[RMDB]
RNA sequence: GGGAACGACUCGAGUAGAGUCGAAAAGGCCCUCAACUCCCCUACUCUCAGCGCAAACAAACACAUCUGAAAAGGCAUCGGCCCCCGCUGGGACUGGCAUCCCGGUGCGAGGGCCUAACCACCAAGGUCUUCCACUUUGAUUCGUCAAAGUGGAAGAAAAAGAAACAACAACAACAAC
Reactivity to 2A3 in 0.01 (KOAc 150mM, MgCl2 10mM, bicine 150mM(pH8.5), 24C), signal-to-noise 4, nucleotides 027 to 126: g030g020c000c000c000u010c020a050a080c010u040c000c000c010c000u020a030c020u000c000u000c010a040g000c000g020c040a040a050a060c030a040a090a000c060a040c010a130u040c020u060g080a050a060a030a040g040g000c020a050u100c060g020g010c000c000c000c000c000g000c000u010g000g000g000a010c020u050g060g010c020a070u040c000c000c000g010g040u030g020c110g020a280g000g010g000c000c010u010a000a010c000c000a010c010c010a050a030g090g010
Reactivity to DMS in 0.01 (KOAc 150mM, MgCl2 10mM, bicine 150mM(pH8.5), 24C), signal-to-noise 3, nucleotides 027 to 126: g010g000c020c040c010u000c160a090a110c090u020c050c020c020c020u020a040c010u000c030u000c000a070g010c030g030c090a080a060a100c110a110a060a100c140a060c060a030u000c010u000g000a070a060a130a090g020g010c050a100u010c190g000g000c000c000c020c010c000g010c010u000g010g000g000a030c030u020g020g000c210a300u010c000c010c020g000g020u020g000c120g040a040g030g020g010c010c030u000a000a070c040c020a080c050c110a100a090g020g010
Structure probing data (2A3 and DMS) for a 177-nucleotide construct. 2A3 adducts were read by reverse transcription with SuperScript II with manganese. Conditions: 150 mM KOAc, 10 mM MgCl2 and 150 mM bicine (pH 8.5), 24 C. For 2A3, 4,265 sequencing reads were counted. In probing experiments dimethyl sulfate is read out at A N1 and C N3, which are open when not base-paired. Source: RMDB libraries RFM100 and RFMREP, as collected in RNAgym.